An RNA of 177 nucleotides, treated with 2A3 and DMS and read out base by base. Conditions: 150 mM KOAc, 10 mM MgCl2 and 150 mM bicine (pH 8.5), 24 C. The DMS profile rests on 62,624 reads.
[RMDB]
RNA sequence: GGGAACGACUCGAGUAGAGUCGAAAACACGGUCAUGAGAAAGGGGGACAUUGGGUCGUGACCAGCUUGGCUUAGCAGCUGUCAUGGUGUUCCCCGAUUUUGGUGAUAGUGAAUUGAGCUAAGCUGGGUCGAUUUCUUCCUUCGGGAGGGAAUUGACAAAAGAAACAACAACAACAAC
Reactivity to 2A3 in 0.01 (KOAc 150mM, MgCl2 10mM, bicine 150mM(pH8.5), 24C), signal-to-noise 9, nucleotides 027 to 126: c020a000c010g010g010u020c020a030u090g060a020g100a100a070a050g010g010g010g010g010a010c020a050u070u130g170g020g010u070c020g020u020g030a030c020c020a000g000c000u010u020g050g000c000u010u060a020g000c010a000g000c010u000g000u000c000a010u040g070g000u060g020u030u000c000c000c000c000g010a010u000u010u020u080g080g000u000g000a010u010a020g020u020g040a040a070u090u110g010a000g000c010u000a010a000g000c000u030g070g000
Reactivity to DMS in 0.01 (KOAc 150mM, MgCl2 10mM, bicine 150mM(pH8.5), 24C), signal-to-noise 9, nucleotides 027 to 126: c030a040c040g010g010u010c020a040u020g000a060g000a030a060a210g010g000g010g010g010a050c070a110u030u030g010g000g010u010c020g010u000g000a200c080c050a010g000c000u010u000g000g000c010u000u000a020g020c120a170g000c000u000g000u000c000a010u010g020g010u030g000u000u000c000c000c000c020g000a010u010u010u020u020g010g020u000g000a020u000a060g010u010g000a090a300u020u010g000a060g010c000u000a000a010g010c000u010g000g010